Notes
The record gives the reactivity of an RNA of 177 nucleotides to DMS and 2A3. DMS adducts were read by reverse transcription with MarathonRT. High DMS reactivity at an A or C suggests that its Watson-Crick edge is free. 2A3 adducts were read by reverse transcription with SuperScript II with manganese. Conditions: 150 mM KOAc, 10 mM MgCl2 and 150 mM bicine (pH 8.5), 24 C. Values cover nucleotides 27 to 126.
RNA sequence: GGGAACGACUCGAGUAGAGUCGAAAAGUGCAAUCGUCCAGCUGCUCGCCGAGAAGUCCGGACAGGUCGGCGUCUCCGACGUCGCAACCGAAAUCGCAGCCACCGAGUCCGACGUGGAUACGGAUUCGAUGACGACGUAGUUCGCUACGUCGUCAUCAAAAGAAACAACAACAACAAC
Reactivity to DMS in 0.01 (KOAc 150mM, MgCl2 10mM, bicine 150mM(pH8.5), 24C), signal-to-noise 2, nucleotides 027 to 126: g030u010g030c000a070a060u010c120g000u000c030c050a100g000c010u000g010c010u000c050g000c180c090g010a090g000a080a080g010u010c070c040g010g010a070c070a210g000g030u000c040g040g010c030g020u000c020u010c190c130g010a020c050g030u000c010g000c100a050a080c030c020g000a080a070a060u020c100g020c030a050g000c010c050a090c070c020g010a140g010u000c020c040g000a110c120g010u000g010g000a110u010a070c050g000g000a060u010u030c040
Reactivity to 2A3 in 0.01 (KOAc 150mM, MgCl2 10mM, bicine 150mM(pH8.5), 24C), signal-to-noise 1, nucleotides 027 to 126: g120u050g000c020a030a080u060c100g070u000c010c010a020g000c020u000g010c000u000c040g190c030c020g030a060g000a090a050g020u110c080c080g040g000a040c040a070g050g020u050c020g000g000c010g010u020c050u040c050c210g000a010c000g030u010c020g000c020a040a060c000c000g050a000a060a030u100c040g010c030a010g010c010c030a040c020c050g000a040g000u030c030c010g030a140c030g190u210g110g000a090u080a150c000g040g000a060u030u090c000